About this RNA: The data come from the RNA Mapping Database (RMDB), library OK1LIB. This 177-nucleotide RNA was probed chemically with DMS and 2A3. The RNA was probed in 150 mM KOAc, 10 mM MgCl2 and 150 mM bicine (pH 8.5) at 24 C. For DMS, 2,153 sequencing reads were counted. Values cover nucleotides 27 to 126. For 2A3 the reverse transcriptase was SuperScript II with manganese. For DMS the reverse transcriptase was MarathonRT.
RNA sequence: GGGAACGACUCGAGUAGAGUCGAAAAAUUUCACAUCCCGAUGCAGGGAAAACAACGUUAACUGAAAAACUAUUGUACUUCAGUGGUGCUAUUCGUGAAGCGGGUACAGUUAAAGGGAAGAAGACUGUGGAAUCCCUUGAUUCGUCAAGGGAUUCCAAAAAGAAACAACAACAACAAC
Reactivity to DMS in 0.01 (KOAc 150mM, MgCl2 10mM, bicine 150mM(pH8.5), 24C), signal-to-noise 2, nucleotides 027 to 126: a060u040u000u020c060a150c150a120u000c010c000c010g010a080u030g000c070a110g000g000g000a030a060a060a070c160a000a060c090g010u020u000a100a010c020u030g010a010a050a130a160a040c030u010a070u040u030g000u010a040c100u000u020c080a020g030u000g020g000u000g000c030u040a050u000u020c090g040u010g010a070a060g000c050g010g010g010u000a050c080a030g050u000u010a000a090a100g010g000g010a060a060g040a080a040g010a130c050u000g000
Reactivity to 2A3 in 0.01 (KOAc 150mM, MgCl2 10mM, bicine 150mM(pH8.5), 24C), signal-to-noise 2, nucleotides 027 to 126: a000u100u120u000c060a090c000a130u000c040c000c000g000a020u260g000c130a130g000g120g000a060a070a040a000c050a150a000c030g030u060u160a060a000c020u000g010a020a010a010a030a010c070u130a070u300u070g010u090a080c060u000u120c000a060g000u040g010g010u020g020c040u000a040u080u040c180g030u010g130a030a010g000c000g030g000g000u070a040c000a030g000u030u050a030a090a030g130g000g000a000a060g060a020a000g070a070c080u150g040